[RMDB]
RNA sequence: GGGAACGACUCGAGUAGAGUCGAAAAGUUUGAAGAUUUCGGUCCUAUGCAAUAUGAACCCAUGAACCAUGUCAGGUCCUGACGGAAGCAGCAUUAAGUGGAUCAUCAUAUGUGCCGUAGGGUAGCCGAGAUUUAGCUAACGACUUUGGUUACGUUCGAACGUAUGAAUCUUCGGAUUCAUACGUUCAAAAGAAACAACAACAACAAC
Reactivity to 2A3 in 0.01 (KOAc 150mM, MgCl2 10mM, bicine 150mM(pH8.5), 24C), signal-to-noise 4, nucleotides 027 to 156: g060u080u120u160g080a050a020g040a070u030u000u010c150g140g070u300c000c000u000a020u020g000c010a000a000u000a000u010g010a030a010c010c000c000a010u050g010a020a040c130c010a020u010g060u090c000a010g030g030u020c010c030u120g110a080c150g000g000a010a010g000c020a000g000c020a010u000u040a100a000g020u000g020g000a020u040c020a010u000c010a000u020a020u050g270u080g120c130c040g010u000a000g020g000g000u010a000g000c000c010g000a010g000a010u020u010u030a040g030c020u040a030a040c030g050a040c020u030u060u070g060g000u060u090a030c040g020u030u050c090
Reactivity to DMS in 0.01 (KOAc 150mM, MgCl2 10mM, bicine 150mM(pH8.5), 24C), signal-to-noise 2, nucleotides 027 to 156: g020u000u000u000g020a170a110g000a100u000u010u000c030g000g010u020c020c010u000a060u010g020c030a060a060u000a030u000g000a040a180c030c020c000a080u000g000a210a250c180c210a110u000g040u000c020a290g020g010u010c020c020u000g040a080c220g040g000a070a110g000c010a290g030c010a080u000u000a110a250g060u000g020g000a030u000c120a080u000c010a020u000a010u000g000u000g040c070c060g050u000a050g000g020g000u000a250g000c000c000g000a050g000a040u000u000u000a070g010c040u020a020a170c040g010a030c030u000u000u020g000g020u000u000a170c060g020u000u010c050

Overview
An RNA of 207 nucleotides, treated with 2A3 and DMS and read out base by base. The 2A3 profile rests on 3,017 reads. For DMS the reverse transcriptase was MarathonRT. It was measured as part of the RMDB library ARCHII. Values cover nucleotides 27 to 156.